Chemical mapping of a 177-nucleotide RNA with DMS and 2A3. Source: RMDB library TTRDEL, as collected in RNAgym. The reactions ran in a buffer of 150 mM KOAc, 10 mM MgCl2 and 150 mM bicine (pH 8.5), at 24 C. For DMS the reverse transcriptase was MarathonRT. For DMS, 1,294 sequencing reads were counted.

RNA sequence: GGGAACGACUCGAGUAGAGUCGAAAAGAUAUGGAGAGUAGCAUCGAUCAUGUCACUCGGAAACGAGUGCAUGGGAGCUACCUCCUAAGUCAAAAUCUCCAGCACGCCUUCGGGCGUGCUGGAGAAAGAUUAUUUCGUUGUUCGCAACGAAAUAAUCAAAAGAAACAACAACAACAAC
Reactivity to DMS in 0.01 (KOAc 150mM, MgCl2 10mM, bicine 150mM(pH8.5), 24C), signal-to-noise 1, nucleotides 027 to 126: g020a000u000a260u000g000g010a060g010a200g030u000a010g000c000a230u000c120g010a100u000c000a020u000g020u000c000a010c000u010c000g010g000a060a060a120c010g000a010g010u000g000c010a000u000g000g000g010a030g020c010u000a010c000c000u000c000c000u000a010a070g000u000c020a080a100a150a100u000c010u000c000c010a000g070c000a020c010g020c000c000u000u020c240g000g000g030c000g040u000g000c000u010g000g000a000g010a000a010a030
Reactivity to 2A3 in 0.01 (KOAc 150mM, MgCl2 10mM, bicine 150mM(pH8.5), 24C), signal-to-noise 2, nucleotides 027 to 126: g030a020u060a010u120g010g010a030g020a100g000u020a010g020c120a300u270c060g150a190u190c040a010u020g300u300c000a000c020u000c000g020g000a030a040a000c000g000a000g000u000g020c000a010u010g000g040g010a020g000c000u000a010c000c010u000c000c000u000a050a000g050u000c020a000a000a040a300u000c000u030c040c000a000g040c040a010c040g060c090c010u170u250c300g180g030g000c060g000u000g020c110u010g040g000a000g000a000a000a000